Record summary: An RNA of 177 nucleotides, treated with 2A3 and DMS and read out base by base. For DMS the reverse transcriptase was MarathonRT. The 2A3 profile rests on 2,924 reads.
[RMDB]
RNA sequence: GGGAACGACUCGAGUAGAGUCGAAAAACAGCACAGCCUGCAAAGCUUAAUGGCAUCACCAAAAAGCUGAAAUGAAUUUAGUCUUUCAUUCUAGAAAAAUGUAUGGCAGGACUCCCAUAUCCCAGGCGACAUGCUAACAAUUCGUUGUUAGCAUGUCAAAAGAAACAACAACAACAAC
Reactivity to 2A3 in 0.01 (KOAc 150mM, MgCl2 10mM, bicine 150mM(pH8.5), 24C), signal-to-noise 2, nucleotides 027 to 126: a000c050a020g080c030a030c020a080g010c000c010u000g000c030a050a040a010g000c000u040u050a040a010u060g000g000c050a100u070c040a040c020c020a020a000a030a040a020g000c010u010g010a040a030a030u030g010a010a010u070u120u130a100g070u020c050u020u070u030c020a030u030u030c040u110a070g200a100a120a040a020a020u100g030u110a050u090g040g000c020a010g010g020a070c020u020c000c010c020a020u050a020u060c020c010c010a020g110g000c030
Reactivity to DMS in 0.01 (KOAc 150mM, MgCl2 10mM, bicine 150mM(pH8.5), 24C), signal-to-noise 4, nucleotides 027 to 126: a060c120a040g000c060a090c100a170g000c020c010u000g010c030a070a110a080g020c010u010u000a040a270u000g000g010c070a140u020c290a120c020c010a000a040a210a040a040g030c000u000g010a150a040a040u000g000a040a040u010u010u000a090g020u000c130u010u000u000c010a030u010u000c050u010a110g010a030a080a040a080a060u000g000u010a020u000g020g030c010a030g000g000a080c040u000c020c010c010a110u010a100u000c010c020c010a110g020g000c240
For 2A3 the reverse transcriptase was SuperScript II with manganese. For DMS, 2,983 sequencing reads were counted.